[RMDB]
RNA sequence: GGGAACGACUCGAGUAGAGUCGAAAAGCUGGGGUUACGCCAUUGCUAGGACGUUCCAGAAGCCUCCAUGAUCUUCCCUUACUGUGGUCAGAGCAUGGUGCAGGGUCUCUCCCCCAGCCCCUCAGCACUGGAGCCAGCUGCACUGUACCCGCCCUGGAUCUUAGACUAGUUUCGACUAGUCUAAGAUAAAAGAAACAACAACAACAAC
Reactivity to DMS in 0.01 (KOAc 150mM, MgCl2 10mM, bicine 150mM(pH8.5), 24C), signal-to-noise 2, nucleotides 027 to 156: g000c030u000g020g000g060g010u010u000a030c050g000c040c020a070u000u000g030c090u000a120g040g020a100c040g020u010u000c020c020a070g010a090a090g010c060c020u000c000c010a070u010g000a050u000c010u000u010c020c010c030u000u000a160c100u010g040u010g040g030u000c070a060g010a060g030c010a030u010g010g020u000g030c040a080g010g000g020u000c040u000c040u010c040c020c010c030c060a180g040c040c010c030c020u000c060a110g000c070a110c040u010g020g000a080g010c020c020a110g040c000u010g000c060a080c070u010g020u000a070c050c020c000g000c000c010c010u010g010g010
Reactivity to 2A3 in 0.01 (KOAc 150mM, MgCl2 10mM, bicine 150mM(pH8.5), 24C), signal-to-noise 2, nucleotides 027 to 156: g030c010u010g020g000g020g030u090u060a040c080g020c030c060a050u090u180g020c040u040a050g050g050a090c040g040u070u000c000c020a000g060a070a000g010c020c030u010c000c020a020u000g030a050u050c010u030u070c050c010c000u080u240a240c170u190g130u250g080g050u050c120a000g010a010g000c000a010u000g000g000u040g030c080a050g030g020g030u040c070u000c070u140c050c000c010c010c010a000g040c000c000c000c000u070c120a020g040c020a010c030u030g010g020a020g010c020c010a020g000c000u020g000c040a010c020u020g020u110a090c000c000c000g010c030c010c000u000g020g030